[RMDB]
RNA sequence: GGGAACGACUCGAGUAGAGUCGAAAACCACGGUUACAUUAUGCGGCACGGACUUCAGCACAACGGAACCAGCCGCGAUCUUGGAGCACUGCCCUACCUGGAUGUUGCCGAGGAUUUUUGCGCCUGAUAAAUUACUCAGGUUCGCCUGAGUAAUUUAAAAAGAAACAACAACAACAAC
Reactivity to 2A3 in 0.01 (KOAc 150mM, MgCl2 10mM, bicine 150mM(pH8.5), 24C), signal-to-noise 3, nucleotides 027 to 126: c000c000a010c020g030g010u060u090a020c010a060u080u120a060u300g020c030g000g000c030a060c200g020g080a090c110u030u040c050a020g070c060a040c040a150a100c070g020g000a020a040c010c000a020g020c000c000g000c010g000a010u000c010u000u080g000g010a030g020c020a030c150u070g030c030c000c010u070a130c020c020u030g090g000a030u040g000u060u040g020c000c000g010a030g020g020a070u030u050u040u080u110g050c070g020c020c010u030g050a060
Reactivity to DMS in 0.01 (KOAc 150mM, MgCl2 10mM, bicine 150mM(pH8.5), 24C), signal-to-noise 8, nucleotides 027 to 126: c010c000a140c120g010g000u000u000a060c050a040u000u000a070u000g010c020g000g020c020a100c150g010g010a150c090u000u000c050a100g020c110a090c220a090a110c120g010g000a050a080c070c060a160g010c010c010g010c030g000a020u010c030u000u000g010g000a070g010c080a100c110u000g000c050c020c010u000a070c040c040u000g010g010a040u000g000u000u000g010c020c020g000a090g010g010a060u000u000u010u000u000g020c110g000c140c010u000g000a140